[RMDB]
RNA sequence: GGGAACGACUCGAGUAGAGUCGAAAAAUCGAACAUACAACUUUGAGCACUGUUACCUCUGCAACCGAAAUUCAUUACGACCCAGAUCCUCAAGACACAGUGAUUGAAGAAGAUAAGGAUUUUGUUAGUCAAAAUCGAUAUUCGUAUCGAUUUUGACAAAAGAAACAACAACAACAAC
Reactivity to DMS in 0.01 (KOAc 150mM, MgCl2 10mM, bicine 150mM(pH8.5), 24C), signal-to-noise 2, nucleotides 027 to 126: a060u010c040g000a110a110c180a130u000a170c070a090a220c040u000u000u010g040a100g010c010a020c050u020g000u000u000a120c120c000u000c040u020g000c090a030a050c050c000g010a040a030a060u020u000c030a050u000u010a040c100g000a110c010c030c030a120g020a050u000c010c020u010c040a080a060g020a070c150a060c060a040g030u000g010a050u010u000g010a050a040g020a120a120g040a080u010a030a050g000g000a110u000u000u000u000g010u000u000a170
Reactivity to 2A3 in 0.01 (KOAc 150mM, MgCl2 10mM, bicine 150mM(pH8.5), 24C), signal-to-noise 2, nucleotides 027 to 126: a010u090c020g010a060a020c030a080u210a110c030a040a050c040u030u070u150g030a020g000c010a010c020u000g040u020u100a160c020c050u000c020u050g000c010a020a010c020c000g030a060a110a080u120u080c030a060u030u160a060c060g010a020c050c000c000a000g000a090u070c010c020u040c070a020a030g040a080c020a010c000a080g070u000g030a050u000u050g040a060a050g020a010a010g060a060u070a040a060g080g020a030u060u010u070u190g100u080u080a050
An RNA of 177 nucleotides, treated with DMS and 2A3 and read out base by base. DMS adducts were read by reverse transcription with MarathonRT. The reactions ran in a buffer of 150 mM KOAc, 10 mM MgCl2 and 150 mM bicine (pH 8.5), at 24 C.